RNA sequence: GGGAACGACUCGAGUAGAGUCGAAAAGUGCCCAUUCAUCACCGAUGGGAUACGAGCUCAGACUGAUGGGAUCGCGGUUGGCCCUGUCCUCGUGUCAGCCGCUAAAACUUAGAGGAAUCGCGUCGCUGGAUCCUGCCCGUCGGAGCCAGGGACGUUAUCGUAUCAGUAAGUUCGCUUACUGAUACGAAAAAGAAACAACAACAACAAC
Reactivity to DMS in 0.01 (KOAc 150mM, MgCl2 10mM, bicine 150mM(pH8.5), 24C), signal-to-noise 3, nucleotides 027 to 156: g020u010g000c010c010c020a090u000u000c040a110u000c080a140c090c040g000a060u010g000g000g000a140u000a070c080g010a120g020c010u000c050a200g020a130c100u010g000a070u000g020g020g010a060u000c050g030c000g020g000u000u000g020g000c030c010c030u000g010u000c060c040u000c020g020u000g010u000c010a050g010c000c000g000c020u000a000a020a070a090c120u010u000a090g010a100g020g000a070a100u000c070g000c050g000u010c010g010c000u000g010g000a010u000c010c000u020g030c010c040c020g010u000c050g030g000a030g000c020c000a050g000g010g020a040c000g010u000u000a050
Reactivity to 2A3 in 0.01 (KOAc 150mM, MgCl2 10mM, bicine 150mM(pH8.5), 24C), signal-to-noise 9, nucleotides 027 to 156: g090u080g060c010c010c010a020u090u110c040a080u060c050a060c080c050g040a020u000g010g000g010a020u080a110c100g030a060g030c020u030c050a060g040a220c110u120g030a050u080g020g000g030a050u080c050g000c000g000g000u010u000g000g010c000c000c030u060g060u030c000c000u020c010g010u000g000u000c000a000g000c010c000g000c000u010a010a020a010a020c070u090u150a020g000a000g030g040a020a040u140c090g000c000g030u010c020g030c270u000g000g000a020u010c000c010u060g040c030c030c030g080u100c030g010g000a000g000c000c000a010g010g020g010a000c000g000u000u010a070